[RMDB]
The record gives the reactivity of an RNA of 207 nucleotides to DMS and 2A3.
RNA sequence: GGGAACGACUCGAGUAGAGUCGAAAAGCAGUUUCACUCACUGUAGACUCUGAGCGCAGAGUGUCAGUCCUGCUACCACAUGCAGGUGAUCAGAGUAUGUGUGAACUCUGACUGACGACACAAUCGCUUGUGUCCUAUAUAAUGAAACUGGUGAGUCGUAUAAAAUUUAGUUCGCUAAAUUUUAUACAAAAGAAACAACAACAACAAC
Reactivity to DMS in 0.01 (KOAc 150mM, MgCl2 10mM, bicine 150mM(pH8.5), 24C), signal-to-noise 4, nucleotides 027 to 156: g000c030a040g000u010u000u010c010a040c010u000c070a090c080u000g010u010a050g000a040c020u000c030u000g000a300g020c120g040c060a040g020a170g050u010g020u000c020a070g000u000c010c010u000g020c010u000a300c080c180a100c250a110u000g000c010a030g000g010u000g020a100u000c020a020g020a070g010u000a050u000g040u010g010u000g020a060a090c000u000c010u000g010a080c000u020g010a070c010g010a020c010a020c000a040a100u000c110g020c080u000u000g030u010g010u000c010c000u000a030u000a020u000a010a030u000g000a030a030a030c010u000g010g000u000g010a100g030u000c080
Reactivity to 2A3 in 0.01 (KOAc 150mM, MgCl2 10mM, bicine 150mM(pH8.5), 24C), signal-to-noise 9, nucleotides 027 to 156: g080c010a000g000u000u000u000c010a010c020u020c000a080c030u030g010u010a000g000a000c000u000c020u020g050a090g180c060g010c070a000g010a000g010u000g000u000c000a000g010u000c010c000u000g000c010u070a150c030c130a110c020a150u110g000c000a010g020g030u070g120a070u040c010a000g000a010g020u050a100u190g230u070g070u070g080a030a010c000u000c000u000g000a010c000u000g010a000c010g010a000c000a000c000a010a140u290c060g010c170u020u010g000u000g000u010c000c000u000a010u010a010u010a040a030u020g000a010a010a000c020u010g010g040u070g060a070g080u140c080
For DMS, 10,005 sequencing reads were counted. DMS adducts were read by reverse transcription with MarathonRT.